[RMDB]
RNA sequence: GGGAACGACUCGAGUAGAGUCGAAAAGAUAUGGAUCUGCUAAUCAGUCAGCACGUUGAAAACAGCAGGCGAUUCGGAAACGAAUCGCCUGCUGUUGGAGUGCUGAACUGACAACAGAUCCUAAGUCGAGCAUAGUAAAGUUCGCUUUACUAUGCUCAAAAGAAACAACAACAACAAC
Reactivity to DMS in 0.01 (KOAc 150mM, MgCl2 10mM, bicine 150mM(pH8.5), 24C), signal-to-noise 2, nucleotides 027 to 126: g020a110u010a300u000g010g010a010u000c000u010g000c030u000a220a300u000c010a020g030u000c020a000g000c000a000c000g030u050u010g000a160a060a000a010c000a010g000c000a050g030g060c000g010a060u010u010c000g020g000a140a100a300c000g060a020a010u010c000g040c000c010u000g000c000u010g010u000u000g000g030a090g030u000g010c000u000g010a010a020c000u000g000a000c090a090a100c010a020g000a010u000c000c000u000a010a110g000u000c080

Conditions: 150 mM KOAc, 10 mM MgCl2 and 150 mM bicine (pH 8.5), 24 C. The record gives the reactivity of an RNA of 177 nucleotides to DMS.